[RMDB]
RNA sequence: GGGAACGACUCGAGUAGAGUCGAAAAGAAAGUCCAUGUCUAUUAUGACGAUGGAAGCCGGUCGUACAUAAUAGUGCGAGGCGAAACAUGAGAGUCUUUGCUGAGAGGUUUAGGCUCGAUGGACGAAGGGAAAUCUAAAGUUCGCUUUAGAUUUCCCAAAAGAAACAACAACAACAAC
Reactivity to DMS in 0.01 (KOAc 150mM, MgCl2 10mM, bicine 150mM(pH8.5), 24C), signal-to-noise 4, nucleotides 027 to 126: g010a130a090a220g000u010c010c000a030u000g010u010c010u000a150u020u010a050u020g010a000c000g000a030u000g000g000a110a300g010c000c020g000g030u010c030g040u000a020c000a070u010a140a090u020a140g000u010g020c020g000a070g000g010c010g000a100a100a280c010a030u000g000a140g020a010g010u000c000u010u000u000g000c020u000g000a190g010a160g010g000u000u000u010a000g000g010c000u010c010g000a040u010g000g000a030c010g020a120a120
Reactivity to 2A3 in 0.01 (KOAc 150mM, MgCl2 10mM, bicine 150mM(pH8.5), 24C), signal-to-noise 6, nucleotides 027 to 126: g060a020a070a010g020u000c000c010a000u040g020u000c020u050a260u210u140a140u300g000a000c010g020a000u030g040g010a040a000g010c020c010g040g160u040c000g010u000a040c010a050u170a180a060u100a300g030u000g000c000g000a010g000g010c010g000a090a180a000c000a010u090g060a060g000a000g220u000c000u000u030u020g010c000u000g030a010g030a070g110g000u020u030u000a000g000g000c000u000c000g000a000u010g000g000a000c040g020a090a090

Record summary: This 177-nucleotide RNA was probed chemically with DMS and 2A3. The DMS profile rests on 6,501 reads.